[RMDB]
RNA sequence: GGGAACGACUCGAGUAGAGUCGAAAAGCUCAUGUGCUGAAUCCAAUCGUUCGGUGGUUUAGGUUCUGUACCCAUUCCAUGGCGGCGGGAACGGGUAUAAUCGAAAUCGAAAGAAGCGGACCCCGCGUGAUAACGGGACAUUCGUGUCCCGUUAUCAAAAAGAAACAACAACAACAAC
Reactivity to 2A3 in 0.01 (KOAc 150mM, MgCl2 10mM, bicine 150mM(pH8.5), 24C), signal-to-noise 6, nucleotides 027 to 126: g010c010u050c080a110u190g060u120g070c020u040g030a050a070u040c020c010a030a090u050c050g070u120u040c010g030g040u060g040g050u060u030u140a090g010g020u090u000c050u090g030u030a020c000c010c000a020u030u000c010c010a050u110g070g000c010g010g000c000g020g000g000a020a000c010g010g000g020u010a010u020a030a030u050c060g020a060a020a060u040c020g010a020a060a070g040a060a020g040c020g030g020a050c020c000c000c000g060c050g040
Reactivity to DMS in 0.01 (KOAc 150mM, MgCl2 10mM, bicine 150mM(pH8.5), 24C), signal-to-noise 5, nucleotides 027 to 126: g010c000u010c190a080u020g030u000g010c020u010g000a080a140u000c020c030a090a230u010c060g020u010u010c010g000g030u030g000g010u010u000u030a100g000g000u000u000c210u000g010u000a020c000c000c000a110u010u000c010c020a070u000g000g000c000g010g000c050g000g000g010a020a040c070g010g000g000u000a020u000a040a090u010c050g000a080a110a050u000c010g000a070a080a100g000a040a040g010c120g000g010a140c030c010c010c060g000c130g010

An RNA of 177 nucleotides, treated with 2A3 and DMS and read out base by base. Values cover nucleotides 27 to 126. The 2A3 profile rests on 5,897 reads. The data come from the RNA Mapping Database (RMDB), libraries RFM100 and RFMREP. DMS adducts were read by reverse transcription with MarathonRT. The RNA was probed in 150 mM KOAc, 10 mM MgCl2 and 150 mM bicine (pH 8.5) at 24 C.